[RMDB]
RNA sequence: GGGAACGACUCGAGUAGAGUCGAAAAGGAGGCCAAGGUCAAGUUGAAAGUUGCAGUCCAGCCAGCAUGAGAACUGCCAUGCGAGCGUAGAGACACAGGCAGCAGCAAAAGGCCCAUUGCCCACAUCAUCCUGUGUAACAUUCGUGUUACACAGGAUAAAAGAAACAACAACAACAAC
Reactivity to 2A3 in 0.01 (KOAc 150mM, MgCl2 10mM, bicine 150mM(pH8.5), 24C), signal-to-noise 6, nucleotides 027 to 126: g120g040a120g020g000c040c020a040a040g070g040u080c060a050a110g100u070u140g160a110a080a020g020u030u010g010c020a010g000u000c010c000a000g000c010c010a020g000c000a000u030g020a020g030a280a200c120u150g090c040c000a000u020g000c010g030a060g000c030g020u090a080g040a040g020a070c040a010c000a040g240g030c020a010g000c010a010g020c020a030a070a070a020g020g000c000c010c000a020u020u140g040c000c020c000a050c010a100u120c010
Reactivity to DMS in 0.01 (KOAc 150mM, MgCl2 10mM, bicine 150mM(pH8.5), 24C), signal-to-noise 7, nucleotides 027 to 126: g000g000a150g020g000c010c050a080a130g000g010u040c120a090a110g020u030u000g010a080a090a100g000u010u000g010c020a120g010u000c010c020a150g010c000c070a270g020c020a010u010g000a140g000a110a110c190u040g000c070c010a030u000g010c030g010a300g020c020g010u020a090g010a190g010a040c040a100c150a110g010g010c020a030g010c010a090g000c080a020a020a090a110g010g000c020c010c020a120u030u020g010c010c010c020a090c190a130u040c140